[RMDB]
Description: Source: RMDB library RFM100, as collected in RNAgym. The record gives the reactivity of an RNA of 177 nucleotides to 2A3 and DMS. As a SHAPE reagent, 2A3 marks flexible, mostly unpaired nucleotides at the ribose 2'-OH. The DMS profile rests on 1,522 reads. Reactivities are given for positions 27 through 126.
RNA sequence: GGGAACGACUCGAGUAGAGUCGAAAAUUUUUUUUUAAUAUGAUGAAAUACCAAUGCAACAUAGAGUCAAGCUCUGAGCUAUACAAAUAGAUAGAAUAGCACGGAAGAGACUUGCUACUUAUUAUCUAUCAUCAGAAUAUUUCGAUAUUCUGAUGAUAAAAGAAACAACAACAACAAC
Reactivity to 2A3 in 0.01 (KOAc 150mM, MgCl2 10mM, bicine 150mM(pH8.5), 24C), signal-to-noise 2, nucleotides 027 to 126: u000u000u000u000u000u000u030u020u170a210a150u200a080u160g010a020u020g010a040a060a060u130a030c020c030a160a020u150g070c060a120a130c040a120u180a010g030a030g020u090c020a050a020g010c000u000c030u030g080a110g030c000u010a000u030a040c020a010a160a080u150a100g150a030u100a030g060a090a000u000a010g000c040a010c130g110g070a080a010g020a020g030a090c000u000u000g000c010u060a050c020u070u140a090u090u080a060u050c060u010
Reactivity to DMS in 0.01 (KOAc 150mM, MgCl2 10mM, bicine 150mM(pH8.5), 24C), signal-to-noise 1, nucleotides 027 to 126: u020u000u000u000u000u020u000u000u010a010a050u000a070u020g000a020u020g000a060a020a060u000a230c070c050a090a000u040g020c130a050a080c120a050u030a060g000a000g000u000c000a000a070g010c060u000c000u000g000a120g030c000u020a010u010a030c030a030a060a050u070a170g020a200u040a090g010a110a030u000a010g020c000a120c120g000g050a030a070g000a150g000a070c010u010u000g000c130u000a010c090u000u030a060u080u000a060u000c050u000